[RMDB]
RNA sequence: GGGAACGACUCGAGUAGAGUCGAAAAGAACUCACCUUUGUAGAAACCUUGGCCACUAAAUUUUCGCUAUUAAUAUCCACAAAGGGUAAUAAUGGUGUGCUAUUCGCCUCACAAAUCAGCUGCAAAACUACGGGGUGCAGUUCGCUGCACCCCGUAGAAAAGAAACAACAACAACAAC
Reactivity to 2A3 in 0.01 (KOAc 150mM, MgCl2 10mM, bicine 150mM(pH8.5), 24C), signal-to-noise 2, nucleotides 027 to 126: g030a010a020c000u000c020a070c000c000u050u050u080g010u050a040g010a020a080a000c010c010u000u050g000g000c030c000a030c080u160a130a000a250u160u100u090u180c010g000c020u000a000u030u000a000a120u010a030u010c000c020a010c180a250a040a100g000g000g030u000a000a000u130a000a010u050g010g050u030g040u030g000c070u030a030u050u040c000g020c060c030u000c030a080c010a060a050a080u000c070a020g000c000u000g070c050a110a000a000a000
This 177-nucleotide RNA was probed chemically with 2A3.
Source: RMDB library OK1LIB, as collected in RNAgym.
Conditions: 150 mM KOAc, 10 mM MgCl2 and 150 mM bicine (pH 8.5), 24 C.
For 2A3, 666 sequencing reads were counted.